[RMDB]
RNA sequence: GGGAACGACUCGAGUAGAGUCGAAAAAUGGAUAAGGGUUCCUCAGCACUGCUGAUCAGCUGAGGGUUAGCCGGUCCUAAGUCAUACCGCAACUCGACUAUGACGAAAUGGGAAACGGGUUAAUAUUCCCGUGCCACGGGGUCGAUCACGCUGGGCAGAACUGUGCUAAGUUCGCUUAGCACAGUUCAAAAGAAACAACAACAACAAC
Reactivity to DMS in 0.01 (KOAc 150mM, MgCl2 10mM, bicine 150mM(pH8.5), 24C), signal-to-noise 1, nucleotides 027 to 156: a040u020g010g010a090u000a080a040g040g010g000u000u000c000c000u020c010a040g040c000a170c080u000g010c030u000g020a080u000c060a250g010c000u010g000a070g040g020g000u000u010a040g000c000c010g000g010u000c020c010u000a100a110g010u000c020a080u000a030c050c000g020c030a110a110c150u000c020g010a050c060u000a010u010g030a080c030g010a060a120a100u000g000g000g010a080a140a030c000g000g010g000u000u010a030a090u000a300u000u000c000c000c010g030u000g020c060c010a170c060g030g000g010g040u000c030g000a080u000c000a060c070g000c000u000g010g000g010c050a110
Reactivity to 2A3 in 0.01 (KOAc 150mM, MgCl2 10mM, bicine 150mM(pH8.5), 24C), signal-to-noise 2, nucleotides 027 to 156: a000u120g000g000a040u090a090a270g090g020g000u060u070c000c020u010c000a000g000c040a040c080u120g000c050u050g070a060u070c010a010g000c000u000g000a020g060g010g040u070u180a000g000c020c000g040g000u000c000c010u020a130a000g020u000c000a000u020a040c020c000g030c100a060a080c050u030c040g000a010c020u000a030u010g010a000c030g010a060a050a140u090g030g000g000a080a250a010c010g000g010g010u030u050a100a030u060a120u160u070c000c000c010g000u010g000c020c010a020c000g020g000g000g020u070c060g010a020u020c010a020c080g030c010u080g000g070g000c040a040
Chemical mapping of a 207-nucleotide RNA with DMS and 2A3. The reactions ran in a buffer of 150 mM KOAc, 10 mM MgCl2 and 150 mM bicine (pH 8.5), at 24 C. 2A3 adducts were read by reverse transcription with SuperScript II with manganese. The data come from the RNA Mapping Database (RMDB), library PDB130. Values are in units of 0.01, from 0 to 300, in steps of 10. DMS adducts were read by reverse transcription with MarathonRT. Values cover nucleotides 27 to 156.